The record gives the reactivity of an RNA of 177 nucleotides to DMS and 2A3. Values cover nucleotides 27 to 126. Conditions: 150 mM KOAc, 10 mM MgCl2 and 150 mM bicine (pH 8.5), 24 C. The 2A3 profile rests on 1,911 reads. 2A3 is a SHAPE reagent: it acylates the 2'-hydroxyl of flexible nucleotides of all four kinds.
RNA sequence: GGGAACGACUCGAGUAGAGUCGAAAACGGAAGCCGAUUCGACAGCGGCGGCGAGGCCAAGCACUUCCUCGCGAUCUCGCUCGCUGGUGCCUGAACCUGCCAUUGUUACGGUGCUCACCGCCAGCUGCACAGCCUGUGUCUUCGGACACAGGCUGUGAAAAGAAACAACAACAACAAC
Reactivity to DMS in 0.01 (KOAc 150mM, MgCl2 10mM, bicine 150mM(pH8.5), 24C), signal-to-noise 1, nucleotides 027 to 126: c090g000g000a080a020g070c020c030g000a230u080u000c130g000a160c080a010g000c000g000g000c000g020g030c000g000a090g000g060c080c030a110a060g010c110a060c050u000u010c000c000u020c020g000c080g000a100u040c020u000c020g010c000u010c060g000c010u010g000g000u060g000c110c040u000g020a200a130c000c020u000g000c000c040a110u010u010g000u000u000a060c140g020g030u000g000c030u000c080a080c070c010g000c000c000a050g060c000u010g000
Reactivity to 2A3 in 0.01 (KOAc 150mM, MgCl2 10mM, bicine 150mM(pH8.5), 24C), signal-to-noise 3, nucleotides 027 to 126: c020g100g050a000a040g040c040c020g030a110u060u120c020g030a060c090a030g000c020g020g010c010g000g000c010g020a000g000g010c010c030a070a010g040c030a060c080u060u040c010c030u070c030g010c010g020a070u030c080u030c130g010c010u050c010g000c030u060g010g030u030g010c000c010u040g030a020a050c000c030u030g000c040c020a070u080u120g070u060u090a080c060g040g010u110g170c000u010c040a030c020c010g020c030c040a020g050c010u040g000